[RMDB]
RNA sequence: GGGAACGACUCGAGUAGAGUCGAAAAGCAAGAGUUCGCGCGCCGAACUGCGCAGCUGGCCCAUGAUCGCGGCGGCCGGCAACCCGCGCCCCACGCAGUCGCCGACGACAAUGCCGAUGCGGUGCUCCGAUACUGGUCGUUUCGACGACCAGUAUCGAAAAGAAACAACAACAACAAC
Reactivity to 2A3 in 0.01 (KOAc 150mM, MgCl2 10mM, bicine 150mM(pH8.5), 24C), signal-to-noise 5, nucleotides 027 to 126: g050c040a060a050g030a020g110u050u040c010g010c020g030c060g090c200c000g050a070a030c030u110g050c070g010c020a010g000c020u050g030g010c010c020c010a050u180g060a120u120c050g000c030g070g010c020g010g000c020c000g020g000c030a010a070c010c020c010g040c020g020c020c000c000c010a050c030g010c020a020g010u030c010g000c030c010g050a180c020g030a000c070a060a090u130g030c030c020g050a050u070g020c000g020g010u050g030c020u040c010
Reactivity to DMS in 0.01 (KOAc 150mM, MgCl2 10mM, bicine 150mM(pH8.5), 24C), signal-to-noise 3, nucleotides 027 to 126: g010c050a150a130g000a070g010u010u000c000g000c040g020c190g010c120c030g020a010a050c080u020g000c110g050c100a130g000c040u010g000g000c000c010c030a140u000g000a170u030c020g000c000g000g020c100g010g000c020c000g000g030c090a040a030c050c100c000g000c170g000c060c030c000c000a070c060g010c040a130g020u000c030g020c030c010g020a120c060g010a080c120a110a080u080g000c020c010g000a090u000g000c000g010g030u020g010c080u010c080
Overview: This 177-nucleotide RNA was probed chemically with 2A3 and DMS. It was measured as part of the RMDB library OK1LIB. Conditions: 150 mM KOAc, 10 mM MgCl2 and 150 mM bicine (pH 8.5), 24 C. For 2A3 the reverse transcriptase was SuperScript II with manganese.